Source: RMDB library RFM100, as collected in RNAgym.
Structure probing data (DMS) for a 177-nucleotide construct.
Reactivities are rounded to 0.1 and cut off at 0 and 3.
DMS adducts were read by reverse transcription with MarathonRT.
Conditions: 150 mM KOAc, 10 mM MgCl2 and 150 mM bicine (pH 8.5), 24 C.
For DMS, 1,758 sequencing reads were counted.
[RMDB]
RNA sequence: GGGAACGACUCGAGUAGAGUCGAAAAACACUCGUAUACGUACGAGUGAACUGAGCCAUCUCUCCAGCCCAAGAUUAGGUUUUAAGGGCUGGAGAGAUGGCUCAGACACCACCGUACGCGGUGGUGAUCAUUCCUCGCAAUUCGUUGCGAGGAAUGAAAAAGAAACAACAACAACAAC
Reactivity to DMS in 0.01 (KOAc 150mM, MgCl2 10mM, bicine 150mM(pH8.5), 24C), signal-to-noise 1, nucleotides 027 to 126: a100c000a010c000u000c030g060u000a020u000a070c170g050u000a010c030g000a040g050u000g010a040a070c000u000g020a000g080c030c000a030u010c000u000c030u010c020c010a010g010c000c010c000a010a300g000a030u000u010a190g000g010u070u020u020u000a080a190g020g010g070c010u020g010g000a000g000a010g050a000u020g000g130c040u000c020a000g000a090c000a000c000c000a000c000c000g000u010a070c180g110c050g000g000u010g000g000u000g010a050